[RMDB]
RNA sequence: GGGAACGACUCGAGUAGAGUCGAAAACAGUGUGUUACUGGCCAGAGGCAUGUGCAGGCUAACCCCCUAACCUUGAAGCCCUAGAAUUUACUGUUCCAGAUCUGUGUGCAUGGGAACCUGGCUUCACGUAAAACAGGGUAUUCGUACCCUGUUUUACAAAAGAAACAACAACAACAAC
Reactivity to DMS in 0.01 (KOAc 150mM, MgCl2 10mM, bicine 150mM(pH8.5), 24C), signal-to-noise 7, nucleotides 027 to 126: c050a070g020u000g020u000g000u010u010a060c080u010g000g010c040c020a100g000a090g010g020c040a040u000g010u000g010c050a060g000g010c050u010a080a170c050c020c030c020c030u010a080a080c090c060u000u010g000a070a080g010c020c010c130u000a060g000a060a070u010u010u010a070c130u000g000u000u010c010c010a070g000a100u010c070u010g010u000g030u000g000c060a050u000g010g010g000a050a090c080c040u000g000g010c040u000u000c060a050c220
Reactivity to 2A3 in 0.01 (KOAc 150mM, MgCl2 10mM, bicine 150mM(pH8.5), 24C), signal-to-noise 3, nucleotides 027 to 126: c030a000g040u040g000u020g030u280u160a080c040u050g070g000c020c010a030g020a060g080g010c040a030u070g020u030g040c000a020g040g030c050u090a190a210c020c020c000c010c000u020a060a070c010c010u000u050g020a010a010g010c000c000c000u010a040g020a050a050u120u100u090a090c040u050g000u040u000c010c000a040g010a080u030c030u040g090u010g030u040g120c020a040u030g110g010g000a010a000c010c000u020g000g030c030u030u030c020a000c050